[RMDB]
RNA sequence: GGGAACGACUCGAGUAGAGUCGAAAAAUUCAGGCCAUUAGCCUUGCCAAUCGUCUUGGGGCGGCUACUCCUAGUGAGAUUGGUCCUAUCUUGGAGCAAAUUAGUCGCUUAGAGUCUGACGCUGCCGCUCUCAGAUAUUCUUCGGAAUAUCUGAGAGAAAAGAAACAACAACAACAAC
Reactivity to 2A3 in 0.01 (KOAc 150mM, MgCl2 10mM, bicine 150mM(pH8.5), 24C), signal-to-noise 5, nucleotides 027 to 126: a000u180u100c040a010g020g000c020c030a130u110u180a020g020c010c020u010u080g010c020c020a040a110u100c070g060u000c070u040u110g060g000g000g000c000g000g020c010u000a000c000u000c000c010u040a010g010u020g140a070g000a080u040u080g070g070u090c010c000u130a220u180c080u060u100g010g000a020g030c030a010a040a270u140u040a120g150u020c010g000c010u000u020a020g010a010g060u020c120u070g010a020c050g020c040u070g070c030c010g040
Reactivity to DMS in 0.01 (KOAc 150mM, MgCl2 10mM, bicine 150mM(pH8.5), 24C), signal-to-noise 5, nucleotides 027 to 126: a130u010u000c090a060g000g010c010c140a150u010u010a110g000c010c020u020u010g010c040c020a090a080u010c150g010u010c090u000u010g010g000g000g010c020g000g000c030u000a050c010u010c000c020u010a050g030u010g010a050g010a300u000u000g000g000u000c010c020u000a090u010c150u010u000g000g000a030g000c070a020a030a200u010u000a070g010u010c020g020c020u000u000a090g010a040g010u000c120u000g020a080c070g010c040u000g020c010c020g010
Overview: Structure probing data (2A3 and DMS) for a 177-nucleotide construct. It was measured as part of the RMDB library OK2TRN. The DMS profile rests on 5,804 reads. The RNA was probed in 150 mM KOAc, 10 mM MgCl2 and 150 mM bicine (pH 8.5) at 24 C. DMS adducts were read by reverse transcription with MarathonRT.